This 177-nucleotide RNA was probed chemically with DMS and 2A3.
RNA sequence: GGGAACGACUCGAGUAGAGUCGAAAAGAAGACGUGACGAAAAGUCACGUCAAUACAGAGACUACGCAACUCUGAAUAACACAACAAAAGUGUAAAAGCGUAGCAGGAUCGAGAGAUCCUGAAAAGAGGUAUAUUAGCUAUUCGUAGCUAAUAUACCAAAAGAAACAACAACAACAAC
Reactivity to DMS in 0.01 (KOAc 150mM, MgCl2 10mM, bicine 150mM(pH8.5), 24C), signal-to-noise 7, nucleotides 027 to 126: g020a160a140g000a000c000g020u010g000a010c000g000a110a080a080a200g010u000c000a000c000g010u000c010a040a040u020a120c010a010g000a010g010a160c010u000a000c000g010c010a110a020c000u000c010u020g000a080a090u040a100a030c020a000c010a110a120c300a080a100a160a090g000u000g000u000a020a020a020a300g000c000g010u000a010g010c000a000g000g000a000u000c000g000a250g010a190g000a010u000c000c010u000g000a070a050a060a060g000a160
Reactivity to 2A3 in 0.01 (KOAc 150mM, MgCl2 10mM, bicine 150mM(pH8.5), 24C), signal-to-noise 8, nucleotides 027 to 126: g170a100a020g010a000c000g000u000g000a000c010g070a100a120a100a110g000u000c000a000c000g000u000c000a000a000u030a000c000a000g010a000g030a060c000u000a000c000g010c030a120a050c010u000c000u010g010a020a040u190a060a000c010a000c020a280a020c050a110a130a070a080g010u020g010u050a020a050a010a000g000c000g000u000a000g000c000a000g000g000a000u000c010g000a000g000a000g000a150u000c000c000u000g000a000a000a000a020g120a030
For 2A3 the reverse transcriptase was SuperScript II with manganese. The 2A3 profile rests on 26,485 reads. Source: RMDB library OK1LIB, as collected in RNAgym.